[RMDB]
RNA sequence: GGGAACGACUCGAGUAGAGUCGAAAAAGAAGUAAGUCGAUUAAGUUCAUUCAUGACUUUUCCAGAUGUUGCAUACAUAACUUUUUUUAUUUGUAUUCGAACUAGUCCAAGCCGAUUCUCAAAAUCAGCACAAUAAGUAGUUCGCUACUUAUUGUGCAAAAGAAACAACAACAACAAC
Reactivity to 2A3 in 0.01 (KOAc 150mM, MgCl2 10mM, bicine 150mM(pH8.5), 24C), signal-to-noise 2, nucleotides 027 to 126: a010g080a030a000g040u080a010a040g040u030c040g050a020u080u060a050a080g160u060u120c020a000u120u050c030a050u200g090a050c000u080u040u080u050c020c030a050g000a120u040g010u080u160g090c030a020u040a100c000a040u040a070a070c050u080u070u030u040u020u100u150a130u030u130u080g150u030a110u020u040c040g010a030a010c010u020a020g060u000c000c000a010a010g000c000c010g070a120u060u000c020u000c000a050a090a030a080u100c020a030
Reactivity to DMS in 0.01 (KOAc 150mM, MgCl2 10mM, bicine 150mM(pH8.5), 24C), signal-to-noise 2, nucleotides 027 to 126: a020g020a090a070g000u000a040a040g020u020c060g010a080u000u040a050a110g000u000u000c050a080u000u000c110a130u010g030a050c010u000u000u000u000c030c030a080g010a040u000g000u000u000g020c070a060u000a050c040a020u000a030a040c020u010u000u010u010u000u030u000a080u040u040u000g000u000a060u000u000c040g010a040a040c050u000a050g020u000c020c020a060a070g020c030c010g000a100u000u000c010u000c040a100a060a070a070u010c160a090